[RMDB]
RNA sequence: GGGAACGACUCGAGUAGAGUCGAAAAUUUGGACUGUGAGAGUGGUGGUUGGGUGUCUCAAGUAUCCUCUGGGGGUGUCCGUGUCCGUUCCGGGGGAAGAAGGGUGUUUUUGGACCAAACUCGUUGAGAUUAGAUGGUGCUUCGGCACCAUCUAAUCAAAAGAAACAACAACAACAAC
Reactivity to DMS in 0.01 (KOAc 150mM, MgCl2 10mM, bicine 150mM(pH8.5), 24C), signal-to-noise 1, nucleotides 027 to 126: u010u000u010g000g030a120c040u010g000u010g000a070g000a060g000u000g000g000u010g000g000u000u000g040g000g000u010g000u000c000u000c080a010a100g010u020a110u010c040c010u020c000u000g000g000g000g010g010u020g000u000c050c070g030u010g000u040c000c010g050u010u010c030c010g030g000g000g010g010a030a060g020a050a170g000g010g020u000g000u000u000u000u000u000g000g000a070c040c040a050a070a070c040u030c060g040u000u030g000a170
Reactivity to 2A3 in 0.01 (KOAc 150mM, MgCl2 10mM, bicine 150mM(pH8.5), 24C), signal-to-noise 1, nucleotides 027 to 126: u120u090u070g080g030a050c060u000g010u080g110a050g030a030g040u080g040g010u080g040g010u190u020g020g080g000u040g000u000c000u000c000a040a050g040u060a010u010c020c000u020c020u030g040g000g050g000g020u010g000u000c000c010g000u080g050u000c050c000g040u120u040c000c000g000g000g000g000g070a010a010g120a050a150g000g040g000u000g000u000u100u000u000u060g130g000a030c030c010a060a050a130c170u060c060g070u060u010g040a080
The record gives the reactivity of an RNA of 177 nucleotides to DMS and 2A3. For 2A3 the reverse transcriptase was SuperScript II with manganese. Values cover nucleotides 27 to 126.